[RMDB]
RNA sequence: GGGAACGACUCGAGUAGAGUCGAAAAUAUGGUUCUUAACUAAAAAUACAUCUUUUUUUGGAUAUAACAAACUUUGAGAAAAUUACGAAUUUAAGAAAAUCAUUAUGAAUUUAGUUAAGAACCAUACUGCGUAUAAUUCGUUCGCGAAUUAUACGCAAAAAGAAACAACAACAACAAC
Reactivity to 2A3 in 0.01 (KOAc 150mM, MgCl2 10mM, bicine 150mM(pH8.5), 24C), signal-to-noise 2, nucleotides 027 to 126: u040a000u000g000g000u000u000c000u010u000a000a000c010u030a000a000a000a000a030u200a080c020a060u100c040u000u030u000u000u010u030u020g050g000a070u050a070u150a300a050c030a040a110a050c040u070u080u070g090a150g050a020a060a150a060u130u280a050c070g010a040a080u000u050u110a050a020g050a000a060a040a050u090c050a040u000u210a100u250g020a010a010u000u010u000a000g000u000u000a000a000g000a000a000c000c000a000u000a000c010
Structure probing data (2A3) for a 177-nucleotide construct. The data come from the RNA Mapping Database (RMDB), library RFM100. For 2A3 the reverse transcriptase was SuperScript II with manganese. The RNA was probed in 150 mM KOAc, 10 mM MgCl2 and 150 mM bicine (pH 8.5) at 24 C.